The record gives the reactivity of an RNA of 177 nucleotides to DMS. DMS adducts were read by reverse transcription with MarathonRT. It was measured as part of the RMDB library TTRINS. The RNA was probed in 150 mM KOAc, 10 mM MgCl2 and 150 mM bicine (pH 8.5) at 24 C. DMS (dimethyl sulfate) methylates the pairing face of unpaired adenines and cytosines.
[RMDB]
RNA sequence: GGGAACGACUCGAGUAGAGUCGAAAAGAUAUGGAGCACGUGUAGCUUUUGACGCUCUCACGGAAUGGAACAUGUCGGAAACGACAUGUUCCAUUCCGUGGAGCGAUAAGCUACGUGCUCCUAAGUCCUAUUAUAUUAAGUUCGCUUAAUAUAAUAGAAAAGAAACAACAACAACAAC
Reactivity to DMS in 0.01 (KOAc 150mM, MgCl2 10mM, bicine 150mM(pH8.5), 24C), signal-to-noise 1, nucleotides 027 to 126: g000a080u000a300u010g010g010a000g000c000a000c010g010u000g010u010a010g040c000u000u010u010u010g010a230c100g000c000u000c000u030c030a010c000g000g030a060a000u010g000g030a060a000c000a010u000g000u010c000g010g000a120a080a270c010g000a000c000a000u010g020u000u000c000c000a000u000u000c000c000g050u000g000g000a000g020c010g020a020u000a010a020g010c010u000a010c000g000u000g000c000u000c000c000u000a000a070g010u000c020